Record summary:
Conditions: 150 mM KOAc, 10 mM MgCl2 and 150 mM bicine (pH 8.5), 24 C. This 177-nucleotide RNA was probed chemically with 2A3 and DMS. For 2A3, 2,190 sequencing reads were counted. For DMS, 6,856 sequencing reads were counted. For 2A3 the reverse transcriptase was SuperScript II with manganese.

[RMDB]
RNA sequence: GGGAACGACUCGAGUAGAGUCGAAAACACCAUAGAAUAUUGGGUUCUGUUUAGGGAGAAGAUAAAGCUGGUUGAAGACAACGACACCUUUGAUACAACCGUCGCUUGUUUUUGACCAGAUCGUGUGCUUUAAGGACAAGUUCGCUUGUCCUUAAAGAAAAGAAACAACAACAACAAC
Reactivity to 2A3 in 0.01 (KOAc 150mM, MgCl2 10mM, bicine 150mM(pH8.5), 24C), signal-to-noise 3, nucleotides 027 to 126: c040a030c010c000a030u100a070g190a190a040u090a150u210u210g150g000g010u060u020c020u050g140u070u090u090a060g000g020g010a070g010a120a050g010a050u100a110a150a010g020c010u010g000g000u000u000g000a000a000g020a020c000a010a000c010g020a000c000a020c000c010u060u170u290g170a130u200a170c090a080a030c080c070g010u020c020g070c180u000u000g020u000u000u000u000u000g000a000c000c000a010g000a010u040c020g020u070g020u040g070
Reactivity to DMS in 0.01 (KOAc 150mM, MgCl2 10mM, bicine 150mM(pH8.5), 24C), signal-to-noise 6, nucleotides 027 to 126: c100a150c020c030a080u000a070g000a090a080u000a090u000u010g000g020g010u000u000c050u000g010u000u000u000a100g010g010g010a090g000a110a050g000a100u010a050a080a130g000c020u000g010g010u000u000g010a000a020g000a010c000a010a020c020g000a010c010a080c170c140u000u010u000g020a190u010a080c230a040a080c240c140g000u000c010g020c240u000u000g010u000u000u000u000u000g000a020c010c000a010g000a020u010c120g010u000g020u010g010